[RMDB]
RNA sequence: GGGAACGACUCGAGUAGAGUCGAAAAACUGUCCAGUAGAAUGUUCUACAGUGAUAGAACUAUUCUAUACUGUACUGCCCAAUAUGGUAGCCACUAACCUGGCUAUGGAGCACUUGAAAUGCAGCUAGUACAGCUGAUAAACUACAUUUUUAAUUGACUGAUUAGUAGCUUUCGAGCUACUAAUCAGAAAAGAAACAACAACAACAAC
Reactivity to DMS in 0.01 (KOAc 150mM, MgCl2 10mM, bicine 150mM(pH8.5), 24C), signal-to-noise 1, nucleotides 027 to 156: a060c020u000g020u000c060c000a180g030u020a060g000a010a050u000g040u000u000c020u010a030c030a260g010u020g020a300u000a000g030a000a030c010u000a060u010u000c010u020a040u010a080c010u010g000u020a030c000u000g000c020c000c010a190a130u000a110u000g000g040u020a000g010c010c010a020c040u020a170a120c100c080u010g000g030c010u000a040u000g000g020a100g000c040a050c070u000u050g010a070a060a040u000g000c000a080g060c010u000a080g050u010a100c010a070g020c080u000g010a100u010a030a050a040c050u010a050c020a040u040u000u000u000u040a060a230u000u010g000a300
Reactivity to 2A3 in 0.01 (KOAc 150mM, MgCl2 10mM, bicine 150mM(pH8.5), 24C), signal-to-noise 4, nucleotides 027 to 156: a010c030u020g000u040c040c000a000g000u000a000g000a010a000u010g000u000u000c010u010a030c060a280g100u100g290a300u010a010g000a000a000c000u020a050u010u010c010u020a090u060a050c010u000g020u000a000c010u060g080c000c000c000a020a060u190a100u100g090g000u000a000g000c010c000a010c030u020a050a060c050c020u010g010g000c000u000a010u040g100g070a040g010c060a060c120u060u080g110a040a040a050u140g050c010a010g000c000u030a020g080u130a150c060a030g040c010u050g010a090u160a070a080a010c060u180a020c020a080u090u130u040u050u250a160a280u110u080g030a030
Overview
The record gives the reactivity of an RNA of 207 nucleotides to DMS and 2A3. The reactions ran in a buffer of 150 mM KOAc, 10 mM MgCl2 and 150 mM bicine (pH 8.5), at 24 C. The 2A3 profile rests on 1,953 reads.